[RMDB]
RNA sequence: GGGAACGACUCGAGUAGAGUCGAAAAGGGCCUCAUCCGUAGCUUUGCGAAUCGGCCCGUGCCACAGCUCGCCGUGACCAGGUGCCAGGAUGUUGGUCUCUAGCAAAGCCAGCGCAGCCAGGCUGCGUAUCUGGGCUCGUUUCGACGAGCCCAGAUAAAAAGAAACAACAACAACAAC
Reactivity to DMS in 0.01 (KOAc 150mM, MgCl2 10mM, bicine 150mM(pH8.5), 24C), signal-to-noise 1, nucleotides 027 to 126: g000g000g050c010c000u000c080a050u000c070c000g040u010a220g000c020u010u130u000g030c020g000a030a010u000c050g010g020c010c060c070g000u020g000c000c110a010c180a190g000c080u000c300g120c000c070g080u000g040a290c300c010a020g000g000u000g000c180c140a280g000g000a010u000g020u050u000g000g000u000c010u000c000u050a110g000c110a080a080a150g000c030c010a150g000c000g000c000a040g030c000c040a190g010g000c000u050g000c000g000
Reactivity to 2A3 in 0.01 (KOAc 150mM, MgCl2 10mM, bicine 150mM(pH8.5), 24C), signal-to-noise 1, nucleotides 027 to 126: g000g000g000c040c020u010c060a000u020c010c000g090u070a020g020c000u090u090u180g060c080g050a020a110u000c000g000g000c000c080c010g000u020g000c090c060a070c060a020g060c000u070c010g000c000c000g010u040g000a010c000c030a000g000g000u020g130c040c010a000g000g020a070u060g020u080u020g030g010u000c050u040c020u110a110g110c060a000a140a000g060c000c000a010g000c000g020c020a000g000c130c040a090g040g120c000u020g000c020g020